Chemical mapping of a 177-nucleotide RNA with DMS and 2A3. Conditions: 150 mM KOAc, 10 mM MgCl2 and 150 mM bicine (pH 8.5), 24 C. For DMS, 1,344 sequencing reads were counted. For DMS the reverse transcriptase was MarathonRT. For 2A3, 835 sequencing reads were counted.
RNA sequence: GGGAACGACUCGAGUAGAGUCGAAAAAAACAGCUUUGAAAGCAGCACGACGCUGGGCAUACGAUGUUAAAGGAAUUGAGCCAAAUAAAGCAGAAAUCAUUGCAUUUAAUGGUAACUUCCAUGGUCGUCAGGUUAUCCGUUUCGACGGAUAACCUGAAAAAGAAACAACAACAACAAC
Reactivity to DMS in 0.01 (KOAc 150mM, MgCl2 10mM, bicine 150mM(pH8.5), 24C), signal-to-noise 1, nucleotides 027 to 126: a060a040a030c080a000g000c020u010u000u000g000a080a020a130g010c080a100g000c050a180c030g010a100c160g000c110u040g000g040g050c050a150u030a070c030g000a070u000g000u000u000a040a140a100g000g000a050a000u000u000g000a100g020c020c020a010a040a000u020a000a020a040g000c040a000g030a010a150a010u010c130a010u050u030g000c000a090u010u040u000a040a190u000g030g030u020a150a100c240u000u040c000c000a080u000g000g000u000c020g080
Reactivity to 2A3 in 0.01 (KOAc 150mM, MgCl2 10mM, bicine 150mM(pH8.5), 24C), signal-to-noise 2, nucleotides 027 to 126: a010a010a010c120a020g010c080u090u150u050g030a070a010a000g060c080a000g010c030a020c080g080a020c060g030c050u050g000g000g000c000a050u090a120c060g090a060u050g030u300u060a040a000a000g000g000a000a010u010u120g030a060g020c000c000a000a170a160u240a000a110a000g000c000a000g270a040a150a000u260c160a120u100u000g000c020a080u000u000u130a090a100u080g000g000u000a010a050c030u000u000c050c000a110u040g030g000u000c000g030